[RMDB]
RNA sequence: GGGAACGACUCGAGUAGAGUCGAAAAAAGUUGAGCUUAAACACAAUGAUAAGCCCUCAGCUAAUCAGUGACAAGUUAUCCUCUGGACUUCAGGACUAAAACCAGGUCUCCUGAGUUCUAGUUUAUAAGGCUUCAAGUCAAGAGGUGAAAUACAACAGAACCAUGCUUUAUUCGUAAAGCAUGGUUCAAAAGAAACAACAACAACAAC
Reactivity to 2A3 in 0.01 (KOAc 150mM, MgCl2 10mM, bicine 150mM(pH8.5), 24C), signal-to-noise 2, nucleotides 027 to 156: a000a020g020u020u000g030a020g000c030u070u080a040a220a040c050a010c060a080a300u230g010a140u030a100a000g020c020c070c000u090c020a030g000c000u070a040a020u080c040a070g050u060g070a030c040a080a070g020u030u010a070u080c000c000u010c010u040g000g000a000c020u000u030c060a030g000g000a020c000u030a000a040a070a010c050c010a040g050g100u120c140u130c070c030u090g030a050g010u000u020c000u000a020g000u010u110u020a300u070a080a000g120g020c000u110u090c090a030a000g010u010c030a030a000g000a000g080g000u090g010a000a100a050u210a040c060a090a020c030a050
Reactivity to DMS in 0.01 (KOAc 150mM, MgCl2 10mM, bicine 150mM(pH8.5), 24C), signal-to-noise 1, nucleotides 027 to 156: a110a040g040u000u000g020a080g000c020u000u000a030a120a150c090a040c060a090a150u000g020a160u000a060a050g000c050c030c080u020c100a110g040c040u010a110a090u000c040a030g000u050g020a130c120a110a150g000u000u000a280u010c000c020u000c000u030g030g000a040c010u020u000c070a070g010g000a030c020u000a020a000a000a120c020c010a010g010g000u010c120u020c020c040u000g020a180g020u000u000c020u000a020g010u000u000u000a120u000a210a090g050g010c010u020u010c010a050a040g090u000c040a020a020g000a000g000g050u000g050a080a040a050u010a120c120a050a160c060a160